[RMDB]
RNA sequence: GGGAACGACUCGAGUAGAGUCGAAAAAUGAGAAAGAAGAAAUCCUCCGAAUCACUGCCGCCAAGAGCCCCAUCCCUGUAGACUCCGACGUGAACUUCGGAAGCCUCGCGGACCGGAUGCCUCCACACCAAUUAUCUAUGUUCGCAUAGAUAAUUGGAAAAGAAACAACAACAACAAC
Reactivity to 2A3 in 0.01 (KOAc 150mM, MgCl2 10mM, bicine 150mM(pH8.5), 24C), signal-to-noise 3, nucleotides 027 to 126: a030u150g010a060g060a060a190a010g080a150a030g020a040a120a050u030c020c010u000c040c010g020a020a020u090c030a040c060u050g020c020c010g010c010c030a070a020g040a040g100c040c000c000c010a030u030c000c010c010u030g040u070a030g010a040c040u010c030c040g010a040c020g080u070g050a050a080c030u050u020c020g040g030a040a020g020c000c000u010c020g030c020g020g030a050c040c030g030g000a010u060g030c010c000u000c020c010a050c010a020
Reactivity to DMS in 0.01 (KOAc 150mM, MgCl2 10mM, bicine 150mM(pH8.5), 24C), signal-to-noise 5, nucleotides 027 to 126: a070u010g010a100g010a100a080a070g000a110a110g010a090a110a110u000c030c020u000c030c030g010a120a100u000c060a060c070u000g000c060c040g030c050c050a050a100g000a100g000c040c020c030c040a110u000c010c000c020u000g010u010a050g000a060c040u000c020c020g020a040c120g010u000g000a080a100c090u000u000c040g000g000a090a120g000c060c020u000c070g000c090g010g000a080c090c050g000g000a070u000g000c030c020u000c020c050a050c200a170